Source information: Conditions: 150 mM KOAc, 10 mM MgCl2 and 150 mM bicine (pH 8.5), 24 C. Chemical mapping of a 177-nucleotide RNA with DMS. The DMS profile rests on 1,439 reads.
[RMDB]
RNA sequence: GGGAACGACUCGAGUAGAGUCGAAAAGAUAUGGAGAUGGUUCUAUUGAUGACCCUACAGAAAGGGAUGUAUAUCGGAAACGAUAUACAUCCCUUUCUUGUAGGCAAGAUAGUCAUCUCCUAAGUCAGAUCCAUGUUUACUUCGGUAAACAUGGAUCAAAAGAAACAACAACAACAAC
Reactivity to DMS in 0.01 (KOAc 150mM, MgCl2 10mM, bicine 150mM(pH8.5), 24C), signal-to-noise 1, nucleotides 027 to 126: g010a100u000a300u020g010g010a020g020a030u000g010g000u020u010c000u010a000u000u000g000a100u010g000a120c300c020c000u000a010c000a030g000a000a000a000g000g010g000a040u000g030u000a000u000a000u000c000g020g000a130a070a280c010g010a000u000a000u010a000c000a000u000c000c000c000u000u000u000c010u000u000g030u010a000g000g010c010a040a040g000a010u000a000g000u030c000a010u000c000u000c000c000u000a000a090g010u030c130a180